[RMDB]
RNA sequence: GGGAACGACUCGAGUAGAGUCGAAAAGACCUGACGGACUUCAGCAAGCGCUUUUUACGUCCGGCGAUGACUUCACUCUCCAGCAAAGUGAAUGCAAUCCUGCUGGCGUCCAUGUACCAGCAAACGCCAAACGUGGUGGGCACGUGGGGCACGGUCCCCAGGAAUGCACUUUCGAGUGCAUUCCUGGAAAAGAAACAACAACAACAAC
Reactivity to 2A3 in 0.01 (KOAc 150mM, MgCl2 10mM, bicine 150mM(pH8.5), 24C), signal-to-noise 2, nucleotides 027 to 156: g030a040c020c060u060g020a020c040g020g020a010c010u070u070c120a040g000c070a110a240g080c080g060c150u150u170u050u110u270a020c050g000u000c000c000g000g010c000g090a110u120g050a050c000u020u020c020a010c000u010c000u130c080c050a040g040c080a080a140a040g050u020g020a020a000u090g030c030a060a180u070c000c020u050g010c000u030g000g000c010g020u030c020c020a030u100g000u030a110c040c020a020g000c000a060a090a080c080g000c020c000a070a050a000c040g020u020g010g140u130g030g050g010c050a020c030g010u020g010g030g000g030c030a010c080g050g000u040c030c010